[RMDB]
The record gives the reactivity of an RNA of 170 nucleotides to 2A3 and DMS.
Reactivities are rounded to 0.1 and cut off at 0 and 3.
DMS adducts were read by reverse transcription with MarathonRT.
Conditions: 150 mM KOAc, 10 mM MgCl2 and 150 mM bicine (pH 8.5), 24 C.
RNA sequence: GGGAACGACUCGAGUAGAGUCGAAAAGGAUGUCUUCCCUUCCUCCCCUCCGGGAUUUCUUCUGAUCGGACUGGCUCAUCCUCGGAAACGGGGGCGGCGGCGUCCGUUCUCUAUUCUUUUCUUUUGAUCCCCAAGGAGUUCGCUCCUUGGAAAAGAAACAACAACAACAAC
Reactivity to 2A3 in 0.01 (KOAc 150mM, MgCl2 10mM, bicine 150mM(pH8.5), 24C), signal-to-noise 9, nucleotides 027 to 129: g050g020a060u110g050u050c050u030u070c020c000c000u020u030c000c010u030c000c000c000c000u020c020c010g020g010g030a040u040u060u020c040u080u010c050u060g030a050u060c020g000g000a010c040u100g090g000c010u020c030a050u020c000c010u000c010g010g000a040a040a030c010g010g010g000g010g000c010g010g010c000g020g030c060g030u000c000c000g000u020u000c000u000c000u010a150u100u040c030u030u070u020u020c010u050u120u040u100g100a090u070c020c010
Reactivity to DMS in 0.01 (KOAc 150mM, MgCl2 10mM, bicine 150mM(pH8.5), 24C), signal-to-noise 7, nucleotides 027 to 129: g060g030a080u060g040u040c060u000u030c050c010c030u030u040c060c020u020c040c020c020c030u030c070c010g020g020g020a090u030u020u020c060u010u010c030u010g040a150u000c050g030g000a070c070u030g060g000c050u000c050a120u030c050c010u000c010g000g040a050a060a110c020g000g050g020g010g050c110g010g020c050g040g030c090g000u000c010c030g000u030u000c030u000c030u000a080u000u030c060u000u000u010u010c010u000u050u000u030g030a060u000c010c030